[RMDB]
RNA sequence: GGGAACGACUCGAGUAGAGUCGAAAAUGAAGCUGCUAAAAAUGCAGAGGUAAAGAAAUUCGUUAUGAUUUCUACGGAUAAAGCCGUUAAUCCGCCUAAUGUCAUGGGAGCUUCAAAGCGAAUUGCAUGGUGGUUCCAAGUUCGCUUGGAACCACCAAAAAGAAACAACAACAACAAC
Reactivity to 2A3 in 0.01 (KOAc 150mM, MgCl2 10mM, bicine 150mM(pH8.5), 24C), signal-to-noise 1, nucleotides 027 to 126: u060g000a000a000g000c000u050g060c000u110a180a210a180a000a000u060g000c000a060g000a050g080g030u050a060a020a020g030a000a140a000u150u050c060g200u110u280a180u300g000a000u020u020u020c000u000a000c000g180g000a000u110a040a090a040g120c000c000g040u000u080a030a020u000c000c080g090c000c030u220a240a160u080g080u170c060a020u050g000g000g020a020g000c000u030u000c000a030a000a000g090c150g050a110a150u040u240g130c000a030